[RMDB]
This 177-nucleotide RNA was probed chemically with 2A3 and DMS. Source: RMDB libraries RFM100 and RFMREP, as collected in RNAgym.
RNA sequence: GGGAACGACUCGAGUAGAGUCGAAAAUCCCUUCUCGAGGUUAUGUUACUGUAAGGCCUGCCUUAAGUAAGUGGUGUUGACGUUUGGGUCCUACGCAACGAGACCCCGUGAACCUUGUCAGGUCCGGCUCUGAAUACACAUUCGUGUGUAUUCAGAGAAAAGAAACAACAACAACAAC
Reactivity to 2A3 in 0.01 (KOAc 150mM, MgCl2 10mM, bicine 150mM(pH8.5), 24C), signal-to-noise 5, nucleotides 027 to 126: u000c000c010c000u030u070c040u030c040g070a070g040g020u120u060a070u170g050u050u040a080c030u030g090u150a070a030g000g000c010c020u030g020c020c000u090u050a070a050g050u040a070a100g040u100g140g070u100g020u070u070g110a050c010g020u010u080u150g020g000g010u010c020c020u050a050c060g060c090a090a030c060g030a060g010a110c000c000c000c000g030u050g040a020a010c010c000u060u090g110u100c060a000g000g000u010c030c000g020g000
Reactivity to DMS in 0.01 (KOAc 150mM, MgCl2 10mM, bicine 150mM(pH8.5), 24C), signal-to-noise 6, nucleotides 027 to 126: u000c000c000c000u010u000c020u000c020g020a060g010g010u010u000a070u010g010u000u000a060c020u000g020u020a130a070g000g010c040c050u000g000c030c030u000u000a070a090g000u010a060a110g010u000g010g020u000g000u000u000g000a110c050g010u010u000u000g010g000g020u010c050c030u010a060c100g000c170a070a050c090g010a300g000a040c020c010c000c010g000u000g000a060a050c070c020u010u010g010u020c100a060g000g000u000c010c030g010g010